[RMDB]
RNA sequence: GGGAACGACUCGAGUAGAGUCGAAAAUGAAAAGUGCCUCGAAAUAAACAUGAAGAUCAAGAACAAGAUACAAACGGCAAGUAUCGUUCGAUCCAUGAAAUAAACGAGAGCACAAUGCCGAAAAAAACUCUGCAUUAAAGUUCGCUUUAAUGCAGAGAAAAGAAACAACAACAACAAC
Reactivity to 2A3 in 0.01 (KOAc 150mM, MgCl2 10mM, bicine 150mM(pH8.5), 24C), signal-to-noise 3, nucleotides 027 to 126: u070g010a010a010a020a060g000u000g000c000c010u000c000g030a300a160a160u030a010a010a000c010a000u020g100a150a110g010a020u030c070a100a070g020a000a010c050a130a060g010a010u010a000c010a030a200a000c060g190g000c060a090a090g000u010a010u020c000g000u000u020c010g000a000u020c000c000a010u000g020a300a300a020u030a010a000a010c010g000a010g000a010g030c000a000c010a000a000u010g000c000c000g070a020a070a000a010a010a040a080
Reactivity to DMS in 0.01 (KOAc 150mM, MgCl2 10mM, bicine 150mM(pH8.5), 24C), signal-to-noise 2, nucleotides 027 to 126: u010g000a090a070a100a190g000u000g000c000c000u000c000g000a020a110a070u000a190a140a040c000a000u000g020a180a190g000a030u000c020a150a090g010a030a000c040a120a080g000a010u000a010c010a000a080a090c100g000g030c170a060a190g020u000a010u000c000g000u000u000c010g010a020u000c000c000a000u000g000a000a040a040u020a030a050a010c000g000a010g000a150g000c020a020c030a020a080u010g020c030c000g000a000a000a050a070a080a030a140